[RMDB]
RNA sequence: GGGAACGACUCGAGUAGAGUCGAAAAGAAGUGGCAGGGACAUGCCCCAUAAGCUCGUUCUAGCAACAUAUGUUUGGCUAGUUCGAGCGAUUAGUCUGGAGGAGCGUCCUCUCGCCUAUUUACGAGAAUCACUAUCAUAGUUCGCUAUGAUAGUGAUAAAAGAAACAACAACAACAAC
Reactivity to 2A3 in 0.01 (KOAc 150mM, MgCl2 10mM, bicine 150mM(pH8.5), 24C), signal-to-noise 9, nucleotides 027 to 126: g120a050a020g100u060g020g000c010a010g020g000g010a010c010a040u240g060c000c000c000c000a040u040a080a030g010c000u000c000g010u000u000c000u000a000g010c010a020a070c030a100u300a070u300g150u120u100u090g150g030c000u000a000g010u000u000c000g000a000g000c000g000a000u000u050a020g100u020c120u060g040g030a170g060g030a090g060c060g010u000c000c000u040c020u030c050g000c000c000u020a110u020u090u070a080c090g020a010g130a130
Reactivity to DMS in 0.01 (KOAc 150mM, MgCl2 10mM, bicine 150mM(pH8.5), 24C), signal-to-noise 9, nucleotides 027 to 126: g010a070a060g020u010g010g010c010a080g000g000g010a020c010a110u040g000c000c010c000c010a050u020a120a200g010c000u000c000g000u000u010c000u000a010g000c000a030a020c050a210u040a100u040g010u020u010u010g010g020c010u000a010g010u000u000c000g010a010g000c000g000a020u020u020a080g000u050c180u010g000g000a120g010g000a110g010c120g000u000c010c000u040c040u010c160g010c020c010u010a070u010u010u020a080c110g000a140g010a170

Source: RMDB library OK1LIB, as collected in RNAgym. An RNA of 177 nucleotides, treated with 2A3 and DMS and read out base by base. The RNA was probed in 150 mM KOAc, 10 mM MgCl2 and 150 mM bicine (pH 8.5) at 24 C. For 2A3, 54,506 sequencing reads were counted. Reactivities are given for positions 27 through 126. DMS adducts were read by reverse transcription with MarathonRT.